[RMDB]
RNA sequence: GGGAACGACUCGAGUAGAGUCGAAAAUUCGGGAAAAGGGGGACUCCGGAACUCCCUGCAGGCUGGGGACGAAGCCCCCACCGGGCGCUCCCCUCGGCGGGCCGUCCAUUGGGUUCACACCCCCAGGGUACAAUCCUGUUCGCAGGAUUGAAAAGAAACAACAACAACAAC
Reactivity to 2A3 in 0.01 (KOAc 150mM, MgCl2 10mM, bicine 150mM(pH8.5), 24C), signal-to-noise 9, nucleotides 027 to 129: u030u010c020g010g010g020a030a120a080a100g050g010g000g000g010a040c010u000c030c020g010g010a030a030c040u040c010c010c000u030g030c030a050g130g000c030u050g010g010g000g000a000c030g040a080a010g010c000c010c010c020c000a020c010c020g000g000g000c060g010c030u100c010c010c010c010u040c040g090g000c060g010g010g000c020c010g010u010c000c000a050u070u160g030g000g000u080u090c050a040c000a040c090c000c000c000c010a020g050g010g010u080a040
Reactivity to DMS in 0.01 (KOAc 150mM, MgCl2 10mM, bicine 150mM(pH8.5), 24C), signal-to-noise 9, nucleotides 027 to 129: u020u030c030g000g010g010a060a050a100a060g020g020g000g010g020a110c070u010c020c030g040g020a070a090c090u020c060c010c010u000g020c110a090g010g030c060u010g000g010g010g010a030c080g010a070a130g010c040c010c000c070c070a020c110c060g000g010g010c060g000c060u020c030c020c000c020u030c070g010g000c070g000g000g000c300c040g000u020c030c020a090u030u030g020g010g020u000u050c110a090c160a200c060c020c000c000c000a070g010g000g020u020a160
Structure probing data (2A3 and DMS) for a 170-nucleotide construct. Values are in units of 0.01, from 0 to 300, in steps of 10. For DMS, 81,120 sequencing reads were counted. The reactions ran in a buffer of 150 mM KOAc, 10 mM MgCl2 and 150 mM bicine (pH 8.5), at 24 C.